[RMDB]
RNA sequence: GGGAACGACUCGAGUAGAGUCGAAAACCCAGUUCCGGGGCCGUUCACUGGAUCCGAAGCCUCUACAAGGAUAAUAUAGGCACUCCAUACCCUACUCCGACUCAAUACGUCCCCGUCGUACAGAAUGCAAGGGCAUCCCUGUUCGCAGGGAUGCCAACACACGAUGAAUGUUCGCAUUCAUCGUGUGAAAAGAAACAACAACAACAAC
Reactivity to 2A3 in 0.01 (KOAc 150mM, MgCl2 10mM, bicine 150mM(pH8.5), 24C), signal-to-noise 1, nucleotides 027 to 156: c010c000c000a010g100u160u040c000c000g000g020g000g010c000c000g060u010u010c070a040c060u090g070g030a130u060c020c000g040a060a020g040c010c020u060c040u040a060c100a180a090g040g000a060u000a200a040u110a030u060a170g040g000c010a010c070u010c030c010a020u030a090c010c010c010u050a060c060u010c010c020g040a010c000u010c060a050a050u040a160c020g000u010c000c000c010c010g010u080c040g010u060a080c010a040g130a170a110u230g130c060a060a090g030g020g000c000a000u000c000c000c000u030g040u040u060c240g020c010a030g010g020g010a010u000g000c000c000a000a000